Chemical mapping of a 177-nucleotide RNA with DMS.
For DMS, 5,342 sequencing reads were counted.
Values are in units of 0.01, from 0 to 300, in steps of 10.

[RMDB]
RNA sequence: GGGAACGACUCGAGUAGAGUCGAAAAAAAGAUAUGGAUGCAUCAAAGUCCGCAAGCCUAAGACAGAGUGCUCGGAAACGAGCACUUCGAGGCUUGAACUACGGAAUGAAGUGCAUCCUAAGUCAAACAUUAUAAGAUCCUUCGGGAUCUUAUAAUGAAAAGAAACAACAACAACAAC
Reactivity to DMS in 0.01 (KOAc 150mM, MgCl2 10mM, bicine 150mM(pH8.5), 24C), signal-to-noise 5, nucleotides 027 to 126: a050a080a130g000a020u000a110u010g000g000a020u000g010c010a000u000c070a100a150a300g000u010c000c010g010c000a000a000g020c010c010u000a190a130g010a110c300a090g000a010g010u010g010c000u000c000g020g000a010a020a040c000g010a020g000c000a010c000u000u000c020g010a020g030g020c010u000u000g000a030a040c080u020a300c030g000g010a020a030u010g010a120a160g000u000g000c000a010u000c000c000u000a000a090g000u000c000a100a070a170